RNA sequence: GGGAACGACUCGAGUAGAGUCGAAAACUGACCAUUGGUCUAGGAUGGGGUCAGCUGGGGUCAGGCCACAGUUCUUGGAGGGGAGACAGACCCUGAGUGGGGCAGCUGCCACCGUGGUGGGGCAUUCGCAACACAUGAGAUUCGUCUCAUGUGUUGCAAAAGAAACAACAACAACAAC
Reactivity to DMS in 0.01 (KOAc 150mM, MgCl2 10mM, bicine 150mM(pH8.5), 24C), signal-to-noise 3, nucleotides 027 to 126: c110u000g000a040c040c040a130u030u030g000g020u000c020u040a100g000g000a120u000g000g010g000g000u000c040a070g010c070u000g000g000g000g010u040c090a090g040g010c030c060a070c130a080g030u010u020c030u020u030g020g010a150g000g030g000g000a090g000a050c190a120g000a160c060c000c000u010g000a120g040u060g030g000g020g020c090a070g010c050u000g000c040c030a050c070c080g030u020g010g020u010g000g000g000g000c050a120u000u010c130
Reactivity to 2A3 in 0.01 (KOAc 150mM, MgCl2 10mM, bicine 150mM(pH8.5), 24C), signal-to-noise 5, nucleotides 027 to 126: c020u040g010a030c010c010a240u060u270g050g020u060c070u080a040g030g070a120u080g000g040g010g000u050c070a040g030c040u030g010g000g010g050u020c040a020g020g060c020c000a110c030a030g100u160u050c050u060u120g030g010a100g020g010g020g000a040g020a030c020a020g020a020c020c000c040u040g050a090g060u130g000g000g000g000c030a040g010c010u110g080c040c010a100c000c040g060u090g000g070u130g000g000g000g000c030a040u110u090c070